The record gives the reactivity of an RNA of 207 nucleotides to 2A3.
The RNA was probed in 150 mM KOAc, 10 mM MgCl2 and 150 mM bicine (pH 8.5) at 24 C.
For 2A3 the reverse transcriptase was SuperScript II with manganese.
[RMDB]
RNA sequence: GGGAACGACUCGAGUAGAGUCGAAAAGCCAAGCAUGGGUGUAAUACAGAAUUGAUCAUUGCCAUGGUGCUUAUGUCUUCCUCAAAGUAGCCCUGUGUCAAAUCUAGCACCUUUGGCUCAUAAACUUGGUUGACAACCAGCAACAUCCAAUAGUGCACACACAUGUGAGCUUCGGCUCACAUGUGUGAAAAGAAACAACAACAACAAC
Reactivity to 2A3 in 0.01 (KOAc 150mM, MgCl2 10mM, bicine 150mM(pH8.5), 24C), signal-to-noise 1, nucleotides 027 to 156: g060c000c010a010a020g060c030a060u120g010g060g000u010g000u100a080a070u150a220c060a030g060a180a120u140u090g010a030u140c070a060u030u210g000c030c000a060u040g010g040u030g000c040u160u110a060u210g080u000c020u030u060c050c030u050c050a070a030a000g000u030a080g030c000c000c100u080g040u010g000u000c030a040a040a040u040c100u060a020g000c000a000c000c000u040u020u000g010g000c060u000c050a130u100a070a180a020c080u050u110g030g010u080u040g030a010c030a050a130c000c010a060g000c040a050a000c010a050u110c080c030a010a010u030a070g060u020g020c010a010